[RMDB]
RNA sequence: GGGAACGACUCGAGUAGAGUCGAAAACUGUAUGUUGGCCUUAUCCUUUUUCAACUGGGCACACUGUAUGUAAUCCACAAAGCAAACAAGUGAGCCGACAUCAUAAUGUUUUAAUGCUGCAUUUGUUUCAAGGGAAACAGAGGAACAAUUAAGUAGACCUAAUGAUAAUAUUCGUAUUAUCAUUAGGAAAAGAAACAACAACAACAAC
Reactivity to 2A3 in 0.01 (KOAc 150mM, MgCl2 10mM, bicine 150mM(pH8.5), 24C), signal-to-noise 7, nucleotides 027 to 156: c040u030g030u120a060u060g030u060u020g040g000c010c010u040u060a050u110c010c010u040u110u030u050u150c080a130a080c120u090g010g020g040c040a030c010a010c030u060g050u120a070u050g060u050a110a080u070c030c010a050c080a180a080a010g070c050a040a010a070c020a060a060g020u030g030a020g020c000c030g050a030c010a040u060c010a040u080a260a050u130g030u030u070u030u110a130a100u150g030c030u030g040c020a060u010u010u050g030u000u050u030c050a060a060g070g010g040a060a110a050c060a090g080a060g060g020a040a040c030a010a070u170u200a080a050g080u100a030g050a060
Reactivity to DMS in 0.01 (KOAc 150mM, MgCl2 10mM, bicine 150mM(pH8.5), 24C), signal-to-noise 4, nucleotides 027 to 156: c040u010g020u010a080u000g000u000u000g030g030c040c060u000u000a070u010c010c020u000u010u000u010u000c040a080a160c050u010g000g020g040c080a090c070a050c050u010g010u000a300u010g010u000a050a110u000c060c030a060c080a070a110a160g010c070a040a100a050c050a060a070g020u000g000a110g010c000c030g010a030c020a050u010c060a090u000a080a150u010g000u000u000u000u000a050a130u010g010c010u000g000c000a150u000u000u000g010u000u000u020c010a070a120g030g010g020a100a050a140c060a080g010a080g010g010a060a050c060a070a080u000u010a060a100g010u000a140g000a170